RNA sequence: GGGAACGACUCGAGUAGAGUCGAAAAGACGCCUAAUGGCGAAAAUGUAAAAUCAACUACACACCAGAUAAAUACAACUGCUAAAUCUCGUAACUAGUUGAUCUAGUCCAGCGGUGAGAUCCGCAGACCAUUACCCUCAGUUCGCUGAGGGUAAUGGAAAAGAAACAACAACAACAAC
Reactivity to 2A3 in 0.01 (KOAc 150mM, MgCl2 10mM, bicine 150mM(pH8.5), 24C), signal-to-noise 6, nucleotides 027 to 126: g040a010c010g020c010c020u190a240a130u300g010g000c030g070a070a090a000a050u300g020u170a020a010a020a090u010c000a000a010c000u010a000c040a010c000a000c050c030a010g020a070u050a050a150a020u170a030c060a160a080c160u150g060c040u120a140a140a010u020c010u000c010g010u000a020a010c000u000a020g000u010u020g020a020u010c050u060a050g100u010c020c040a000g000c000g000g000u040g070a110g020a100u050c000c000g000c000a010g020a030
Reactivity to DMS in 0.01 (KOAc 150mM, MgCl2 10mM, bicine 150mM(pH8.5), 24C), signal-to-noise 3, nucleotides 027 to 126: g010a140c020g070c000c000u000a180a220u100g020g000c000g000a030a050a050a080u020g010u020a130a020a070a020u010c000a020a060c000u000a040c120a090c220a080c050c030a060g000a010u010a030a090a090u070a020c200a130a090c050u010g000c100u030a000a070a050u000c030u010c300g000u020a080a300c300u000a010g000u050u010g000a040u030c020u040a010g010u000c030c030a050g030c000g050g020u000g010a040g010a070u040c000c000g070c000a200g000a180
Notes
The record gives the reactivity of an RNA of 177 nucleotides to 2A3 and DMS. The reactions ran in a buffer of 150 mM KOAc, 10 mM MgCl2 and 150 mM bicine (pH 8.5), at 24 C. The data come from the RNA Mapping Database (RMDB), library OK1LIB. The 2A3 profile rests on 4,456 reads.